This 207-nucleotide RNA was probed chemically with DMS. DMS adducts were read by reverse transcription with MarathonRT. The DMS profile rests on 1,846 reads. The reactions ran in a buffer of 150 mM KOAc, 10 mM MgCl2 and 150 mM bicine (pH 8.5), at 24 C.
RNA sequence: GGGAACGACUCGAGUAGAGUCGAAAAAAACGAACACUAUUAGAAUUAAGUAGAUCAUCUGAAAAUCCACUAACAAGAUCGAUAGACACUGCCGUAUAUAGGAGAAAAACAACUCUUCGGGUUGUAGGUACUAGGAAAAAUCCAAAUUGCGACACUAAAAGAGGGAAUAGUUCGCUAUUCCCUCUUUAAAAGAAACAACAACAACAAC
Reactivity to DMS in 0.01 (KOAc 150mM, MgCl2 10mM, bicine 150mM(pH8.5), 24C), signal-to-noise 1, nucleotides 027 to 156: a060a030a020c030g000a090a060c070a200c000u010a070u010u010a060g010a060a120u000u000a070a070g020u020a060g020a030u000c060a200u000c020u000g010a130a060a080a060u000c000c040a020c050u000a060a120c050a060a070g000a090u000c020g010a130u010a020g010a050c060a060c050u000g010c000c050g020u000a070u000a080u000a040g000g000a090g000a070a020a020a100a120c020a050a020c000u010c010u000u000c050g030g030g020u000u000g000u000a010g000g040u000a060c110u010a070g020g000a000a030a080a100a070u010c020c000a020a160a080u000u010g030c000g000a250c060a080c090u010a070